This 177-nucleotide RNA was probed chemically with 2A3 and DMS. Reactivities are given for positions 27 through 126. The RNA was probed in 150 mM KOAc, 10 mM MgCl2 and 150 mM bicine (pH 8.5) at 24 C. For 2A3 the reverse transcriptase was SuperScript II with manganese. It was measured as part of the RMDB library M2PK90.
RNA sequence: GGGAACGACUCGAGUAGAGUCGAAAAGCAUUGGGAAAGUUAAUCAAAAGUGCAUCAAAACUUUCCCUAAACGAAAUCAAAAUCGUUAUGAUGCACUUUUGACAUCGAUUAAGAUGUAUAGACACAACCUUUUACUAGUGUUCGCACUAGUAAAAGGAAAAGAAACAACAACAACAAC
Reactivity to 2A3 in 0.01 (KOAc 150mM, MgCl2 10mM, bicine 150mM(pH8.5), 24C), signal-to-noise 5, nucleotides 027 to 126: g040c040a070u110u210g020g000g060a050a070a040g050u070u130a100a050u070c020a020a000a010a000g010u000g020c000a000u010c040a040a050a100a110c010u020u000u000c000c000c010u010a020a010a010c000g020a020a010a050u200c080a050a050a030a200u040c020g000u020u040a070u190g010a010u000g000c000a010c000u000u000u000u010g000a000c000a000u010c000g120a150u210u220a110a070g010a010u020g050u010a050u050a090g130a010c030a010c010a120a100
Reactivity to DMS in 0.01 (KOAc 150mM, MgCl2 10mM, bicine 150mM(pH8.5), 24C), signal-to-noise 5, nucleotides 027 to 126: g010c150a100u000u000g010g020g010a100a080a100g010u000u000a100a130u010c020a010a010a000a010g020u000g000c000a000u000c010a110a080a060a110c090u010u000u000c000c010c000u000a020a020a000c020g010a010a070a050u000c300a100a080a110a080u000c000g010u000u000a200u000g010a000u010g000c000a000c000u000u000u010u000g000a050c010a010u000c010g000a130u000u000a100a080g000a000u000g000u000a090u010a050g010a100c150a070c180a050a130